Conditions: 150 mM KOAc, 10 mM MgCl2 and 150 mM bicine (pH 8.5), 24 C. Structure probing data (2A3) for a 177-nucleotide construct. Reactivities are given for positions 27 through 126.
[RMDB]
RNA sequence: GGGAACGACUCGAGUAGAGUCGAAAACUUUGGUGAGGCCCUAUCUAGUAAAGCAAUCCACCAAGCAGGUGAUUUCACACAAUUCAGGUUCUCAUAGAAAAUGCGCCCUGACUUGACAGGUAUGGUCCCUGAGUACGGCAUUCGUGCCGUACUCAGGAAAAGAAACAACAACAACAAC
Reactivity to 2A3 in 0.01 (KOAc 150mM, MgCl2 10mM, bicine 150mM(pH8.5), 24C), signal-to-noise 1, nucleotides 027 to 126: c010u030u050u170g080g010u100g050a020g000g000c000c000c000u030a040u110c030u010a060g130u180a100a000a000g000c000a000a000u000c070c060a000c010c000a050a030g150c120a070g130g020u020g030a010u050u110u070c080a050c000a000c000a010a040u050u090c030a010g010g000u010u000c000u000c040a030u070a120g190a060a090a060a000u020g020c030g130c100c040c000u000g010a000c000u060u000g010a010c000a000g000g000u010a090u120g000g000u070c000
As a SHAPE reagent, 2A3 marks flexible, mostly unpaired nucleotides at the ribose 2'-OH.
2A3 adducts were read by reverse transcription with SuperScript II with manganese.